RNA sequence: GGGAACGACUCGAGUAGAGUCGAAAACAUCUAUAGAGGAGCUGUUAUGAUAAUCGUCGACAAUCAAGGUCAGAUUAGCAAUAUAAUGGCCUGCAUCCAAUCCUGUGAUGAUUAUCUUAUCAUCAUAGAUAUUACCGGACUUCGGUCCGGUAAUAUCAAAAGAAACAACAACAACAAC
Reactivity to 2A3 in 0.01 (KOAc 150mM, MgCl2 10mM, bicine 150mM(pH8.5), 24C), signal-to-noise 7, nucleotides 027 to 126: c020a060u080c040u150a150u120a220g110a110g070g070a060g010c040u030g040u080u030a040u080g070a040u030a030a010u010c040g110u070c060g070a030c020a080a130u170c060a110a060g080g010u010c010a000g020a070u040u050a020g060c070a120a030u100a010u020a130a080u030g010g000c000c000u050g020c030a050u040c040c040a040a080u040c000c030u060g000u030g020a000u000g000a000u010u040a080u150c120u110u100a030u020c020a000u010c010a000u040a070
Reactivity to DMS in 0.01 (KOAc 150mM, MgCl2 10mM, bicine 150mM(pH8.5), 24C), signal-to-noise 3, nucleotides 027 to 126: c080a130u020c110u020a120u050a130g000a090g000g020a090g020c060u000g000u000u010a000u000g020a050u040a020a010u010c010g010u000c080g020a070c070a030a130u040c240a100a060g010g040u010c010a040g000a120u010u010a010g030c140a070a120u030a030u000a030a040u010g000g030c000c010u000g000c210a080u030c050c100a100a130u030c090c050u000g000u000g000a010u000g000a000u010u000a070u050c140u010u010a040u020c000a020u010c060a020u010a080

Structure probing data (2A3 and DMS) for a 177-nucleotide construct. 2A3 adducts were read by reverse transcription with SuperScript II with manganese. The RNA was probed in 150 mM KOAc, 10 mM MgCl2 and 150 mM bicine (pH 8.5) at 24 C. The DMS profile rests on 4,017 reads. DMS adducts were read by reverse transcription with MarathonRT. It was measured as part of the RMDB library OK1LIB. For 2A3, 5,025 sequencing reads were counted.